[RMDB]
RNA sequence: GGGAACGACUCGAGUAGAGUCGAAAAGCCUGGUAUCCGGAGCCAACAGCUGCAGUGAGUACCGAUUCCGUUGCUGACAGGCCGCUGUUGCGAUGCACAAGUGAUUUGCUUGAGUUUGGCCGCAGAAGGCAUCCUAUUACUUCGGUAAUAGGAUGCCAAAAGAAACAACAACAACAAC
Reactivity to DMS in 0.01 (KOAc 150mM, MgCl2 10mM, bicine 150mM(pH8.5), 24C), signal-to-noise 2, nucleotides 027 to 126: g010c000c010u000g020g000u020a150u010c020c100g020g020a130g010c050c010a040a040c060a000g020c000u010g020c010a050g020u000g000a100g010u000a020c060c010g040a250u040u000c180c030g010u020u030g000c000u000g000a000c010a080g010g050c010c080g000c020u000g010u000u000g000c030g040a120u000g020c000a120c050a050a060g020u020g000a180u050u060u010g010c010u000u000g010a080g010u000u000u000g010g010c000c070g000c100a060g000a170a070
Reactivity to 2A3 in 0.01 (KOAc 150mM, MgCl2 10mM, bicine 150mM(pH8.5), 24C), signal-to-noise 3, nucleotides 027 to 126: g040c000c000u010g090g020u060a100u060c020c000g050g000a020g020c000c000a000a010c000a030g020c000u000g010c000a000g010u040g130a010g030u010a050c030c010g030a050u210u120c090c020g090u110u010g000c010u040g060a040c030a080g000g130c000c020g050c030u020g020u020u030g020c020g020a050u050g040c060a040c030a080a050g020u030g160a300u050u040u250g030c030u040u020g030a030g060u040u060u170g060g000c000c000g030c050a040g030a120a070
Notes
The data come from the RNA Mapping Database (RMDB), library OK1LIB. Chemical mapping of a 177-nucleotide RNA with DMS and 2A3. The RNA was probed in 150 mM KOAc, 10 mM MgCl2 and 150 mM bicine (pH 8.5) at 24 C. Reactivities are given for positions 27 through 126. For 2A3, 2,093 sequencing reads were counted. The DMS profile rests on 2,636 reads.